[RMDB]
RNA sequence: GGGAACGACUCGAGUAGAGUCGAAAAGGCUACUCUUCUUUCCCUUUUCUCGUCUUCCUCGGUCAACCUCUUAAGUUCCUCUUCUUCCUCCUUGCUGAGGUGCUUUCCUCCCGCGCUCAGCUGCUUCUUCUUGUUCUCGAGGGCCUUCCUUCUUCGGCUACAUCUUCUACUUCGGUAGAAGAUGUAGAAAAGAAACAACAACAACAAC
Reactivity to 2A3 in 0.01 (KOAc 150mM, MgCl2 10mM, bicine 150mM(pH8.5), 24C), signal-to-noise 3, nucleotides 027 to 156: g030g010c070u090a030c020u060c070u170u020c060u100u140u150c010c010c040u040u000u010u000c070u020c030g050u010c000u070u040c030c000u010c020g030g000u050c040a040a110c010c000u030c060u110u200a120a050g030u080u060c000c010u040c030u090u000c010u060u020c030c030u030c000c020u040u070g020c040u020g030a050g000g140u050g020c020u080u110u050c020c040u040c050c030c020g010c000g020c020u040c010a040g000c010u000g000c000u020u050c000u060u000c000u020u070g070u170u030c020u010c010g020a050g010g020g070c000c000u040u030c010c010u030u090c000u030u030c010g110g000